[RMDB]
RNA sequence: GGGAACGACUCGAGUAGAGUCGAAAACACUGAGUCUUCGGACUCAGUGAAAAGCACGAAAAGGACCAAAACGAGCAAUAACAUAAAUAAAGGUCCAAAUAAAAAGUCUAGCGUUCGCGCUAGACAAGCUAUUAUCUCCCUUCGGGGAGAUAAUAGCAAAAGAAACAACAACAACAAC
Reactivity to 2A3 in 0.01 (KOAc 150mM, MgCl2 10mM, bicine 150mM(pH8.5), 24C), signal-to-noise 1, nucleotides 027 to 126: c030a000c000u000g010a000g010u000c010u010u150c260g060g000a010c000u000c000a000g000u010g000a000a000a000a010g000c000a010c070g010a040a020a090a140g010g000a000c030c020a070a080a030a060c040g080a020g050c000a030a130u180a170a060c040a080u210a100a250a010u110a110a170a020g020g000u000c020c050a020a020a010u020a000a060a010a010a010g020u000c000u000a010g010c010g030u010u030c200g000c000g000c090u000a000g020a020c000a000a000
Structure probing data (2A3) for a 177-nucleotide construct. Source: RMDB library M2PK50, as collected in RNAgym.